[RMDB]
The data come from the RNA Mapping Database (RMDB), library M2PK90. An RNA of 177 nucleotides, treated with DMS and 2A3 and read out base by base. The DMS profile rests on 1,698 reads. For DMS the reverse transcriptase was MarathonRT. The 2A3 profile rests on 2,380 reads.
RNA sequence: GGGAACGACUCGAGUAGAGUCGAAAAAUAAACAGCCUUAGCGUAUGUUUUCAUCCCAACAAAUAAUACGCGAGGUAACAAUGACUGUUCGCGUAUUAAUCAGUCAAUAACGCUAAGGUAAAAAAAAUCAUAAAUCCAAGUUCGCUUGGAUUUAUGAAAAAGAAACAACAACAACAAC
Reactivity to DMS in 0.01 (KOAc 150mM, MgCl2 10mM, bicine 150mM(pH8.5), 24C), signal-to-noise 2, nucleotides 027 to 126: a070u010a080a060a090c090a150g000c000c000u000u000a000g000c000g010u000a030u020g030u000u010u010u010c170a150u010c020c000c030a120a040c120a060a100a160u000a020a010u010a000c000g010c000g010a030g020g000u010a050a050c140a120a100u000g010a010c020u000g000u000u000c000g000c010g020u020a010u000u000a030a110u000c040a020g000u000c000a110a090u010a130a030c020g020c000u000a010a020g000g000u000a010a030a000a040a050a040a050a070
Reactivity to 2A3 in 0.01 (KOAc 150mM, MgCl2 10mM, bicine 150mM(pH8.5), 24C), signal-to-noise 2, nucleotides 027 to 126: a010u170a010a080a030c040a020g010c000c000u010u000a000g000c000g020u060a040u220g060u080u090u090u130c040a080u040c010c000c000a000a010c020a000a110a040u080a020a000u000a000c000g010c000g000a010g030g050u040a030a040c050a040a130u160g010a010c010u020g040u080u000c010g000c010g000u010a000u000u000a020a100u010c010a000g040u040c000a010a120u050a100a020c010g000c000u010a000a000g000g020u000a000a010a000a000a000a000a000a020